Source information:
An RNA of 177 nucleotides, treated with 2A3 and DMS and read out base by base. It was measured as part of the RMDB library OK1LIB. DMS adducts were read by reverse transcription with MarathonRT. 2A3 adducts were read by reverse transcription with SuperScript II with manganese. The RNA was probed in 150 mM KOAc, 10 mM MgCl2 and 150 mM bicine (pH 8.5) at 24 C.
[RMDB]
RNA sequence: GGGAACGACUCGAGUAGAGUCGAAAAGGAUAUCCAGCUAUGAUGACUUUGUAAUUCGAGGGCGCGCAGUUCUUCAAUGGGUAUGGACAUCAGGUGAGAGUACACUGGGGGUUGUCAGGACCAGCUCGCCAUGAUUAUUUUUCGAAAUAAUCAUGGCAAAAGAAACAACAACAACAAC
Reactivity to 2A3 in 0.01 (KOAc 150mM, MgCl2 10mM, bicine 150mM(pH8.5), 24C), signal-to-noise 7, nucleotides 027 to 126: g100g000a050u070a050u120c030c020a010g040c040u080a060u170g050a040u060g030a080c030u110u090u130g080u200a110a130u110u110c050g010a060g020g050g000c030g000c010g020c070a010g020u040u030c010u050u050c030a060a120u090g010g030g010u110a060u080g030g010a020c020a070u060c030a040g050g010u040g040a110g000a010g060u060a040c030a020c050u030g020g000g010g000g000u010u110g020u030c050a030g060g000a020c010c000a030g010c050u060c060
Reactivity to DMS in 0.01 (KOAc 150mM, MgCl2 10mM, bicine 150mM(pH8.5), 24C), signal-to-noise 6, nucleotides 027 to 126: g000g010a070u020a050u030c030c030a080g010c070u010a090u010g000a070u030g000a070c060u000u010u010g030u010a080a120u020u010c050g000a090g000g010g020c040g020c080g010c070a070g000u000u020c030u000u010c060a060a090u020g000g000g020u000a040u010g000g000a050c050a070u020c080a050g010g010u010g010a080g000a100g010u020a080c090a070c060u010g000g000g020g000g010u000u000g000u000c050a080g000g000a080c050c030a070g010c130u000c110